This 177-nucleotide RNA was probed chemically with 2A3 and DMS. DMS (dimethyl sulfate) methylates the pairing face of unpaired adenines and cytosines. DMS adducts were read by reverse transcription with MarathonRT. Values cover nucleotides 27 to 126. It was measured as part of the RMDB library OK1LIB.
[RMDB]
RNA sequence: GGGAACGACUCGAGUAGAGUCGAAAAGCUCAAGGACAUACGCAUUAUUUUUAUAACUGUUAUCCAAAAAAUGCAAAUGCCAAUGGAAGCGGCCAAACAUAUGUGAAUCCAGCAACAGCAGGAGAUACCCCAUUCUAUUGUUCGCAAUAGAAUGGGGAAAAGAAACAACAACAACAAC
Reactivity to 2A3 in 0.01 (KOAc 150mM, MgCl2 10mM, bicine 150mM(pH8.5), 24C), signal-to-noise 3, nucleotides 027 to 126: g020c010u020c040a020a090g020g030a050c010a060u080a010c080g020c040a030u020u090a250u090u210u070u040u040a180u050a140a140c040u040g070u210u100a090u140c040c040a000a000a030a030a030a050u040g010c010a000a020a190u070g010c000c000a020a030u080g090g020a060a020g030c010g010g000c030c010a030a090a020c090a110u180a130u140g050u030g120a090a060u000c020c010a030g020c000a030a050c030a120g030c070a070g040g050a000g000a010u110a110
Reactivity to DMS in 0.01 (KOAc 150mM, MgCl2 10mM, bicine 150mM(pH8.5), 24C), signal-to-noise 2, nucleotides 027 to 126: g000c030u020c020a140a160g020g000a020c000a000u010a070c300g000c000a000u000u030a060u010u010u000u000u010a060u060a080a140c210u010g020u000u010a050u000c060c090a000a060a030a010a030a000u020g000c020a090a210a030u020g000c040c050a130a070u030g000g000a170a020g000c030g030g000c020c070a000a070a070c070a040u030a010u040g000u000g000a060a060u020c000c040a050g050c030a080a010c140a090g010c020a120g020g010a040g020a100u000a080